[RMDB]
RNA sequence: GGGAACGACUCGAGUAGAGUCGAAAAUGCAUGCCAGAUAAAGUGCCCUUGGGUACAAGAAAGAUGUAUCUCCAGCUGUUGAUAAGAGGGGGAAGCCUUUCUCUUCCACCUCGCCAAAAUUUUCAAACUUAGAAACCUUGUUCGCAAGGUUUCUAAGAAAAGAAACAACAACAACAAC
Reactivity to DMS in 0.01 (KOAc 150mM, MgCl2 10mM, bicine 150mM(pH8.5), 24C), signal-to-noise 2, nucleotides 027 to 126: u010g000c080a050u010g010c050c050a030g000a150u020a080a080a090g010u000g010c010c010c030u030u000g020g010g040u010a020c020a020a070g010a090a170a130g000a110u010g010u010a040u000c040u010c040c030a140g010c020u000g000u000u000g010a090u010a150a080g020a020g010g000g020g030g000a010a010g030c300c060u000u020u000c130u010c010u010u010c000c040a040c010c010u000c030g010c180c200a000a080a180a060u000u000u000u010c080a050a070a280